[RMDB]
RNA sequence: GGGAACGACUCGAGUAGAGUCGAAAAGAUAUGGAUGCUAUGGCGAGCGACGAUCAUACCUCGGAAACGAGGUAUGGGAGCUUCCAUGAGCAUCCUAAGUCAAAAGAGAGGGGUUCGCCCCUCUCAAGACCUAGAUAGCGUUCGCGCUAUCUAGGUCAAAAGAAACAACAACAACAAC
Reactivity to DMS in 0.01 (KOAc 150mM, MgCl2 10mM, bicine 150mM(pH8.5), 24C), signal-to-noise 2, nucleotides 027 to 126: g010a020u000a170u020g000g000a000u000g020c000u000a020u000g030g000c300g010a000g010c000g040a040c230g000a010u020c000a000u000a010c000c000u000c000g000g000a050a010a020c000g040a010g000g010u000a000u010g010g000g000a000g000c020u000u000c000c000a000u010g020a030g020c010a000u010c000c000u000a000a050g000u000c020a140a140a120a190g000a030g000a020g010g000g000g010u000u020c300g020c000c000c000c000u000c000u020c000a010a050
Reactivity to 2A3 in 0.01 (KOAc 150mM, MgCl2 10mM, bicine 150mM(pH8.5), 24C), signal-to-noise 1, nucleotides 027 to 126: g010a000u000a010u040g010g010a040u010g000c020u020a020u060g070g020c300g180a070g010c010g300a300c000g000a080u010c010a010u010a060c000c000u000c000g000g000a000a010a000c010g010a000g000g030u000a000u000g000g000g010a000g000c020u090u030c000c000a000u100g070a010g000c010a010u000c000c000u010a000a000g000u000c020a030a020a200a110g000a010g000a000g040g010g010g030u070u100c170g250c010c020c010c000u000c000u020c000a000a000